This 177-nucleotide RNA was probed chemically with DMS and 2A3.
DMS adducts were read by reverse transcription with MarathonRT.
The data come from the RNA Mapping Database (RMDB), library TTRDEL.
The RNA was probed in 150 mM KOAc, 10 mM MgCl2 and 150 mM bicine (pH 8.5) at 24 C.
RNA sequence: GGGAACGACUCGAGUAGAGUCGAAAAGAUAUGGACGUAACCACGAGAUCCCUCGGAAACGAGUGAGAUCGAUGAGUGGACGUCCUAAGUCAAAACAAAAUAAGGGUCUUCGGACCCUUAUUUUGAAGUACUAAGUCUCCUUCGGGAGACUUAGUACAAAAGAAACAACAACAACAAC
Reactivity to DMS in 0.01 (KOAc 150mM, MgCl2 10mM, bicine 150mM(pH8.5), 24C), signal-to-noise 2, nucleotides 027 to 126: g020a060u000a300u000g000g000a020c000g000u020a120a150c010c010a000c010g000a200g010a010u000c000c010c020u000c010g000g010a160a130a160c020g000a010g020u000g010a120g030a030u000c010g010a060u010g000a200g020u000g000g000a090c000g010u000c000c000u000a010a060g010u000c020a120a140a110a300c000a000a010a000a000u000a000a000g000g000g040u000c000u000u010c200g010g000a000c000c000c000u000u000a000u000u000u000u000g010a080a140
Reactivity to 2A3 in 0.01 (KOAc 150mM, MgCl2 10mM, bicine 150mM(pH8.5), 24C), signal-to-noise 1, nucleotides 027 to 126: g010a030u110a010u120g000g000a000c000g030u050a170a170c010c010a030c030g100a120g000a060u010c010c020c090u030c030g020g050a020a020a060c030g000a000g040u200g030a300g010a080u000c030g000a200u170g070a060g000u000g020g040a070c000g000u000c000c000u000a130a010g010u020c010a000a030a110a220c010a000a000a020a000u050a010a010g000g020g000u000c000u050u150c300g130g010a010c020c020c000u020u010a000u000u010u000u000g000a000a000